[RMDB]
RNA sequence: GGGAACGACUCGAGUAGAGUCGAAAAUAGAUUUGCAAUGAUGAAUAAUUUAGAAGCAUACAUCGUAUUAAAUGAGACUGACAUUGAUCCAACAUUACGACGCGUGAUGAACGAAAUUGAUAAAAAGCCUUCAUUAACGGUUCGCCGUUAAUGAAGGAAAAGAAACAACAACAACAAC
Reactivity to DMS in 0.01 (KOAc 150mM, MgCl2 10mM, bicine 150mM(pH8.5), 24C), signal-to-noise 3, nucleotides 027 to 126: u000a030g020a090u000u020u000g000c080a140a120u030g000a050u030g020a080a030u020a050a050u000u010u010a040g020a180a120g020c040a000u020a090c100a120u000c050g000u000a020u000u020a100a060a030u000g000a120g000a070c100u000g020a020c080a070u020u000g000a060u030c030c080a030a140c100a040u000u010a020c080g000a070c160g030c030g020u000g010a020u000g030a050a050c130g000a010a070a060u000u030g010a110u050a060a070a060a120a050g020
Reactivity to 2A3 in 0.01 (KOAc 150mM, MgCl2 10mM, bicine 150mM(pH8.5), 24C), signal-to-noise 4, nucleotides 027 to 126: u170a020g150a160u130u190u130g080c060a060a100u070g030a030u050g060a170a120u170a130a090u170u070u180a200g070a210a020g110c010a030u050a170c040a030u090c000g010u060a070u080u250a190a060a150u210g060a130g070a070c090u110g030a030c030a030u080u010g050a010u030c010c000a000a020c010a040u060u150a040c080g020a030c030g070c040g170u010g050a050u060g060a040a000c000g050a090a040a050u110u120g030a040u130a090a070a000a000a000g030
An RNA of 177 nucleotides, treated with DMS and 2A3 and read out base by base.
For DMS the reverse transcriptase was MarathonRT.
For DMS, 2,985 sequencing reads were counted.
The RNA was probed in 150 mM KOAc, 10 mM MgCl2 and 150 mM bicine (pH 8.5) at 24 C.
The data come from the RNA Mapping Database (RMDB), library OK1LIB.
Values cover nucleotides 27 to 126.